The record gives the reactivity of an RNA of 177 nucleotides to 2A3 and DMS. Reactivities are given for positions 27 through 126. The 2A3 profile rests on 8,037 reads. Values are in units of 0.01, from 0 to 300, in steps of 10.
RNA sequence: GGGAACGACUCGAGUAGAGUCGAAAAUGCUGAUGAUUGGGAGGGAGUAUAACUCCUGGGUCAGAUCGCCUAGACAGACAGCAGAAAACAGUGACAGUGCCCCUCGGUGACUCUCGGGGCUGCUAGGGAACCUACAUAAUUUCGAUUAUGUAGGUUCAAAAGAAACAACAACAACAAC
Reactivity to 2A3 in 0.01 (KOAc 150mM, MgCl2 10mM, bicine 150mM(pH8.5), 24C), signal-to-noise 5, nucleotides 027 to 126: u080g000c010u030g010a070u030g010a070u080u180g040g020g010a070g020g050g010a080g070u130a120u050a300a090c000u020c000c000u000g010g010g010u050c010a010g020a130u060c020g020c030c020u050a040g040a060c020a000g050a030c000a010g020c030a010g080a030a110a010a020c080a040g050u060g130a020c030a040g010u000g070c010c000c000c010u010c020g030g030u070g060a070c030u020c010u030c140g000g000g000g000c020u010g010c010u040a030g090g050
Reactivity to DMS in 0.01 (KOAc 150mM, MgCl2 10mM, bicine 150mM(pH8.5), 24C), signal-to-noise 9, nucleotides 027 to 126: u010g010c010u010g010a110u000g010a110u010u010g010g000g010a190g000g000g000a080g020u000a120u010a130a130c020u000c010c010u000g000g010g010u000c040a080g000a060u000c100g010c020c020u000a070g010a090c100a060g010a110c050a030g010c030a050g000a070a060a090a090c120a040g000u010g010a090c110a060g010u010g000c020c020c010c020u010c130g010g000u000g000a110c150u010c030u000c190g000g000g000g010c030u000g010c040u000a120g010g010